[RMDB]
RNA sequence: GGGAACGACUCGAGUAGAGUCGAAAACGUACGUGGAGACACGUACGACGAGACUUCGGUCUCGAAUCGGGCGAAGUUGUGGCGCCCUCGUGUUAGGAGUCGGUUGUCGGCGAGCCAACGGACUCAAGAGCUAACACGAUAAUUUAUGCCAUGACAGGGAUGAGAUGUAAUUCGUUACAUCUCAUCCAAAAGAAACAACAACAACAAC
Reactivity to 2A3 in 0.01 (KOAc 150mM, MgCl2 10mM, bicine 150mM(pH8.5), 24C), signal-to-noise 2, nucleotides 027 to 156: c000g000u000a000c000g010u030g010g020a040g020a030c000a000c000g010u000a000c000g000a010c010g000a000g000a000c000u050u090c160g090g010u010c020u000c000g000a050a140u160c070g010g000g000c010g010a040a080g010u010u010g000u000g010g000c000g000c000c020c010u010c010g010u000g000u000u010a030g030g020a020g020u010c160g050g020u100u010g000u010c040g000g120c210g010a020g000c000c000a010a000c010g080g000a000c000u000c000a050a060g170a020g150c000u000a010a000c000a000c000g000a000u010a000a000u020u080u150a110u170g040c000c000a010u020g010a000c010a030g010
Reactivity to DMS in 0.01 (KOAc 150mM, MgCl2 10mM, bicine 150mM(pH8.5), 24C), signal-to-noise 2, nucleotides 027 to 156: c030g020u000a010c000g060u010g000g000a300g020a270c000a030c000g000u000a000c010g010a160c040g010a150g010a020c000u000u010c290g060g010u010c000u000c000g020a020a060u010c060g010g040g000c000g000a030a090g040u000u010g020u020g000g020c010g010c020c020c030u010c000g060u010g030u010u000a030g060g010a040g030u000c000g010g040u000u000g000u010c030g000g020c090g050a250g010c150c020a030a080c030g000g030a030c000u000c010a060a090g000a300g040c010u000a030a030c010a040c020g000a040u010a030a100u000u000u000a050u040g020c020c020a040u010g020a060c020a030g010